Chemical mapping of a 177-nucleotide RNA with 2A3 and DMS. DMS adducts were read by reverse transcription with MarathonRT. The RNA was probed in 150 mM KOAc, 10 mM MgCl2 and 150 mM bicine (pH 8.5) at 24 C.
[RMDB]
RNA sequence: GGGAACGACUCGAGUAGAGUCGAAAAGAUAAUGAAGAGAUUAUUUACGGUAUUUACCCGCCAUUGCUUGAUAUACCGCAUUUUCAUUUUUAAUCAGGGUAUAUUUCAUUUCUAAUAAGCUCAGUUCCCUAGUGGGAGUAUUCGUACUCCCACUAGGAAAAGAAACAACAACAACAAC
Reactivity to 2A3 in 0.01 (KOAc 150mM, MgCl2 10mM, bicine 150mM(pH8.5), 24C), signal-to-noise 1, nucleotides 027 to 126: g020a000u080a090a010u070g030a090a000g020a000g000a120u080u110a070u110u300u090a040c000g020g000u020a020u070u100u020a070c020c020c020g040c040c010a100u170u080g000c030u060u020g020a000u000a020u000a140c040c010g150c090a100u090u060u050u050c000a040u040u030u020u190u300a040a050u130c100a080g300g030g000u030a080u030a000u060u040u130c020a020u000u000u070c000u000a100a060u020a120a060g010c000u000c100a100g030u000u110c030
Reactivity to DMS in 0.01 (KOAc 150mM, MgCl2 10mM, bicine 150mM(pH8.5), 24C), signal-to-noise 1, nucleotides 027 to 126: g010a050u010a010a000u030g000a070a110g010a170g010a030u010u000a040u010u000u010a080c030g000g010u010a030u000u000u000a110c040c010c090g000c140c100a100u020u010g030c060u000u000g000a040u010a030u010a040c010c010g020c190a060u000u000u020u000c130a150u000u010u000u010u000a040a050u000c030a140g020g000g010u000a060u000a040u000u000u000c020a040u010u000u010c050u010a080a080u000a030a220g010c020u010c070a140g010u010u000c100